[RMDB]
RNA sequence: GGGAACGACUCGAGUAGAGUCGAAAAUCGUAGCCGAACUCGACUACAGUUACAUUGAGGGGGACGUUACCAUCAUUCUUUACCAUUAGGUUGAUGCUGAGCUCCGAGCCGUCUGGUGGGAUAACAGGGCAUAAGUAUAGUUCGCUAUACUUAUGCCAAAAGAAACAACAACAACAAC
Reactivity to DMS in 0.01 (KOAc 150mM, MgCl2 10mM, bicine 150mM(pH8.5), 24C), signal-to-noise 9, nucleotides 027 to 126: u010c100g010u000a030g020c020c010g010a180a160c300u010c010g010a050c020u000a030c070a080g010u010u000a090c160a120u010u000g010a140g000g020g000g010g010a150c100g010u000u000a080c070c020a060u000c080a090u010u000c050u000u000u000a130c070c050a090u000u010a040g000g010u000u010g010a060u010g010c040u010g010a080g000c030u000c030c030g010a070g020c040c050g000u010c040u000g010g020u000g000g000g000a080u010a060a100c180a110g000
Reactivity to 2A3 in 0.01 (KOAc 150mM, MgCl2 10mM, bicine 150mM(pH8.5), 24C), signal-to-noise 8, nucleotides 027 to 126: u060c020g020u030a000g030c030c020g040a150a090c070u050c100g070a040c040u080a050c050a090g050u110u090a070c070a140u110u160g060a160g010g010g000g010g010a000c030g010u020u030a040c020c000a030u090c010a030u090u060c010u070u080u060a090c020c020a080u040u070a030g050g010u050u100g040a080u070g010c030u020g020a020g030c010u000c040c040g030a010g000c010c010g040u050c010u020g030g010u030g020g000g020a030u070a120a070c050a070g100
The record gives the reactivity of an RNA of 177 nucleotides to DMS and 2A3. Conditions: 150 mM KOAc, 10 mM MgCl2 and 150 mM bicine (pH 8.5), 24 C. The 2A3 profile rests on 12,258 reads. Reactivities are given for positions 27 through 126. The DMS profile rests on 12,676 reads. DMS adducts were read by reverse transcription with MarathonRT. Source: RMDB library OK2TST, as collected in RNAgym.